[RMDB]
An RNA of 207 nucleotides, treated with DMS and 2A3 and read out base by base.
RNA sequence: GGGAACGACUCGAGUAGAGUCGAAAAUUGCGAAUUAUAUGGAGGCAUUUGUCGCUGUAUUGGGUCUUGCUGCCAAGGCUGGCACUGGCACGAAGGAGGAGGAUGUCGUUAAGCUCCAGAUGGACGAUGCCAAGGUUCCUAUGAAGAUCCUCGACGCCGUUUAGAUGUCAUUCGUGACAUCUAAACGAAAAGAAACAACAACAACAAC
Reactivity to DMS in 0.01 (KOAc 150mM, MgCl2 10mM, bicine 150mM(pH8.5), 24C), signal-to-noise 2, nucleotides 027 to 156: u010u020g020c000g000a140a170u010u000a120u010a050u000g020g010a140g010g040c170a230u010u000u010g020u000c060g020c000u030g020u000a050u010u000g020g030g000u010c030u010u000g020c060u000g050c040c010a100a110g020g010c070u000g000g040c060a070c100u000g010g000c020a100c050g010a080a130g040g010a110g030g020a090g010g000a090u010g010u000c040g000u010u000a080a160g030c050u000c010c030a090g010a200u000g000g000a020c050g000a180u000g020c010c000a040a070g000g040u010u000c010c030u010a160u000g010a080a070g000a100u010c020c000u000c020g010a080c040g010c060
Reactivity to 2A3 in 0.01 (KOAc 150mM, MgCl2 10mM, bicine 150mM(pH8.5), 24C), signal-to-noise 5, nucleotides 027 to 156: u100u060g020c020g060a040a070u200u040a110u070a080u260g060g010a030g070g000c040a040u040u110u220g090u060c040g000c060u040g020u090a100u040u130g040g000g020u040c030u040u090g040c080u030g020c030c030a060a070g090g020c040u030g020g000c030a030c050u020g020g000c010a010c060g020a040a040g040g040a030g000g030a010g020g020a050u070g020u060c040g020u050u070a060a030g000c010u020c010c010a030g020a080u110g030g010a010c030g010a020u050g030c040c000a010a010g050g000u020u030c010c010u050a100u110g060a020a020g000a030u030c000c000u010c020g020a020c050g040c020
2A3 adducts were read by reverse transcription with SuperScript II with manganese. The RNA was probed in 150 mM KOAc, 10 mM MgCl2 and 150 mM bicine (pH 8.5) at 24 C. In probing experiments dimethyl sulfate is read out at A N1 and C N3, which are open when not base-paired.